[RMDB]
RNA sequence: GGGAACGACUCGAGUAGAGUCGAAAAAGAAAGGUAUUUCAAAGAUCGAAAGAUCAACAAUGCUCGAUAGAUAUACAUCCCAAAUGAAGUAACAAAUCGAGCAACUUCAACGGAAACGACAAAAAAAGAGUGUAUAUGAGUUCGCUCAUAUACACUCAAAAGAAACAACAACAACAAC
Reactivity to 2A3 in 0.01 (KOAc 150mM, MgCl2 10mM, bicine 150mM(pH8.5), 24C), signal-to-noise 2, nucleotides 027 to 126: a000g010a020a010a000g120g000u080a070u030u020u000c120a140a110a020g000a010u000c010g010a030a000a040g000a020u010c010a000a000c020a050a100u040g000c000u010c010g010a010u020a050g050a010u020a000u010a100c010a030u050c000c000c010a000a000a020u130g010a040a030g040u040a060a050c050a110a120a070u000c000g010a000g060c000a000a030c010u090u070c060a080a040c030g090g020a090a060a030c050g120a020c080a020a090a010a000a010a060a070
Reactivity to DMS in 0.01 (KOAc 150mM, MgCl2 10mM, bicine 150mM(pH8.5), 24C), signal-to-noise 2, nucleotides 027 to 126: a010g020a100a100a120g020g020u000a020u000u000u020c090a190a090a280g000a010u010c010g000a190a100a120g000a000u000c010a050a160c160a110a160u000g000c010u000c030g000a030u000a110g000a070u000a020u000a010c010a060u030c010c000c000a040a050a060u000g000a010a050g000u000a050a060c190a040a080a040u010c000g000a020g020c040a070a040c010u000u000c020a050a240c180g000g020a020a030a040c040g000a100c140a030a000a030a080a050a080a180
This 177-nucleotide RNA was probed chemically with 2A3 and DMS. The reactions ran in a buffer of 150 mM KOAc, 10 mM MgCl2 and 150 mM bicine (pH 8.5), at 24 C. The DMS profile rests on 1,276 reads. Values cover nucleotides 27 to 126. As a SHAPE reagent, 2A3 marks flexible, mostly unpaired nucleotides at the ribose 2'-OH. For 2A3, 2,064 sequencing reads were counted. Values are in units of 0.01, from 0 to 300, in steps of 10. DMS adducts were read by reverse transcription with MarathonRT.